Conditions: 150 mM KOAc, 10 mM MgCl2 and 150 mM bicine (pH 8.5), 24 C. The record gives the reactivity of an RNA of 177 nucleotides to DMS and 2A3. For 2A3 the reverse transcriptase was SuperScript II with manganese.
RNA sequence: GGGAACGACUCGAGUAGAGUCGAAAAUUUGUGAAGAAAAAAGAAUUUGCACUGUUCAGCUGACUUUGGGCUACUUUUAACCAGGAGCUCAAAACUCCAUUUAAAAGGUUGUCAGCCAGGCAAGUAGGAUCGUCAUUCUAUUCGUAGAAUGACGAUCAAAAGAAACAACAACAACAAC
Reactivity to DMS in 0.01 (KOAc 150mM, MgCl2 10mM, bicine 150mM(pH8.5), 24C), signal-to-noise 1, nucleotides 027 to 126: u020u000u030g010u000g010a130a090g020a010a100a040a100a150a090g000a150a070u000u010u010g050c010a130c010u010g000u020u000c300a070g000c010u000g000a020c020u000u000u010g010g000g000c020u000a060c000u010u010u000u000a010a070c300c300a080g010g000a000g020c010u010c130a010a060a050a200c080u000c000c020a100u010u000u000a040a040a040a070g000g010u000u000g010u000c010a010g030c000c030a020g000g000c010a000a010g000u000a050g000
Reactivity to 2A3 in 0.01 (KOAc 150mM, MgCl2 10mM, bicine 150mM(pH8.5), 24C), signal-to-noise 1, nucleotides 027 to 126: u160u230u120g130u050g100a150a140g060a050a170a030a010a000a040g050a000a080u020u000u060g150c220a220c270u000g010u160u120c080a020g030c010u000g010a000c000u040u040u030g020g050g000c000u060a200c010u000u070u070u040a000a040c100c000a030g030g000a000g000c010u030c000a050a000a000a050c060u000c010c070a030u020u030u300a070a120a040a030g030g020u020u030g000u000c020a000g000c000c000a000g020g000c020a040a030g060u110a040g190
Values cover nucleotides 27 to 126. For DMS, 820 sequencing reads were counted.